The record gives the reactivity of an RNA of 207 nucleotides to 2A3 and DMS. Reactivities are given for positions 27 through 156.
RNA sequence: GGGAACGACUCGAGUAGAGUCGAAAAUACGGAGUUCGCUCCGUAGUAGGGCGUACUACGCUAAGACAGGAGGGUCUACCCACCUCGGAUCCCAAAUAGGAUCCGAGAGGACCACUCCAAUGACGGCGUAUCGCGAUUGUCUGGCUUCGGCCAGAAAUCAAGUAAUAUAGUUCGCUAUAUUACUUGAAAAAGAAACAACAACAACAAC
Reactivity to 2A3 in 0.01 (KOAc 150mM, MgCl2 10mM, bicine 150mM(pH8.5), 24C), signal-to-noise 5, nucleotides 027 to 156: u060a000c010g000g010a010g000u050u090c100g090c110u000c000c050g000u000a020g030u050a010g020g130g000c010g030u100a100c050u000a000c020g000c040u070a120a090g110a080c060a030g000g010a000g010g010g010u000c010u050a180c040c040c010a040c010c000u000c000g000g000a000u020c030c030c040a150a300a080u300a100g000g010a000u000c000c000g000a000g000a000g000g000a000c000c020a300c070u040c000c040a030a110u110g040a040c060g000g010c020g000u010a040u300c010g010c010g030a060u050u260g090u050c010u010g000g030c000u050u040c200g120g000c020c000a000g000a010a010a010
Reactivity to DMS in 0.01 (KOAc 150mM, MgCl2 10mM, bicine 150mM(pH8.5), 24C), signal-to-noise 3, nucleotides 027 to 156: u000a010c000g010g010a030g090u000u000c300g000c010u000c010c000g060u030a020g030u000a100g030g010g010c030g030u000a100c100u000a010c000g010c020u000a070a210g010a220c050a110g040g010a040g010g020g000u000c010u000a060c020c000c030a300c130c000u030c020g010g010a020u000c000c000c030a060a150a240u000a070g010g010a020u010c040c000g000a000g010a070g000g000a020c000c010a190c010u000c000c000a140a050u010g020a110c170g000g010c000g000u000a040u000c020g000c000g000a090u010u000g010u000c000u000g020g010c010u000u010c260g040g020c000c000a010g000a030a040a150
Description:
The reactions ran in a buffer of 150 mM KOAc, 10 mM MgCl2 and 150 mM bicine (pH 8.5), at 24 C.